[RMDB]
RNA sequence: GGGAACGACUCGAGUAGAGUCGAAAAGGGAAUAUCUCAGGGGUAGAUUGGACGGACCUUGGGCUUGGAUUUGGGGUACAUGGGAGAUGGAGGCAUCCAGCCCAGAAUUGGAAGGUGUGGAGCUCUCUGUUCCCCUCUCUGGUUUGGUGGGGAAGUCGUAUCGAUUGAGAUUCGUCUCAAUCGAUACAAAAGAAACAACAACAACAAC
Reactivity to 2A3 in 0.01 (KOAc 150mM, MgCl2 10mM, bicine 150mM(pH8.5), 24C), signal-to-noise 1, nucleotides 027 to 156: g040g000g010a070a060u080a100u010c070u020c070a050g000g040g010g000u030a040g020a240u110u170g000g060a030c010g010g030a010c000c000u110u100g020g000g000c020u040u140g010g000a040u090u000u120g000g010g020g000u030a090c030a100u120g040g010g020a080g000a010u130g010g020a040g030g000c030a110u010c000c010a000g030c020c040c010a040g050a100a120u230u090g040g030a030a060g040g020u040g060u090g110g020a040g020c020u020c010u010c040u080g040u030u070c030c010c040c000u030c010u010c010u020g090g030u080u180u060g000g030u040g000g030g000g020a000a020g050u240c160
Conditions: 150 mM KOAc, 10 mM MgCl2 and 150 mM bicine (pH 8.5), 24 C. Chemical mapping of a 207-nucleotide RNA with 2A3. Values cover nucleotides 27 to 156. Values are in units of 0.01, from 0 to 300, in steps of 10. The 2A3 profile rests on 646 reads. Source: RMDB library OK3TST, as collected in RNAgym.